[RMDB]
RNA sequence: GGGAACGACUCGAGUAGAGUCGAAAAACCUCCACCUUCGGGUGGAGGUCGUGCGUAGCAGCGUUAAAUUAAUAGCUACGCUUAAUAAAUUUAUUUAACGCAUAAAACUGUGUUUCGACACAGUUAAUCAAUUGUUGAGUUUCGACUCAACAAUUGAAAAAGAAACAACAACAACAAC
Reactivity to 2A3 in 0.01 (KOAc 150mM, MgCl2 10mM, bicine 150mM(pH8.5), 24C), signal-to-noise 2, nucleotides 027 to 126: a000c000c010u010c000c000a030c000c010u050u050c290g160g020g000u000g000g000a000g000g000u010c020g030u010g010c000g000u000a010g000c090a040g000c000g020u010u010a010a070a030u070u150a070a040u050a080g000c000u000a000c000g000c000u000u080a060a010u090a030a040a010u100u120u070a010u010u030u010a000a010c000g000c020a020u110a050a270a010a010c010u000g000u000g020u020u070u110c160g060a010c000a000c000a030g000u000u020a000a020
Reactivity to DMS in 0.01 (KOAc 150mM, MgCl2 10mM, bicine 150mM(pH8.5), 24C), signal-to-noise 1, nucleotides 027 to 126: a040c010c000u010c000c000a000c000c000u000u000c250g020g000g060u010g010g000a000g000g010u000c050g000u000g000c000g020u000a000g030c000a220g030c020g020u010u010a000a030a050u000u010a040a090u000a090g010c000u000a000c000g010c000u010u010a050a030u000a060a070a170u000u000u000a070u000u000u000a020a000c010g000c010a200u000a040a030a050a040c000u000g020u000g000u000u010u020c130g000a080c010a020c000a010g000u000u000a020a080

Source information:
An RNA of 177 nucleotides, treated with 2A3 and DMS and read out base by base. For DMS the reverse transcriptase was MarathonRT. It was measured as part of the RMDB library M2PK50. 2A3 adducts were read by reverse transcription with SuperScript II with manganese. 2A3 is a SHAPE reagent: it acylates the 2'-hydroxyl of flexible nucleotides of all four kinds.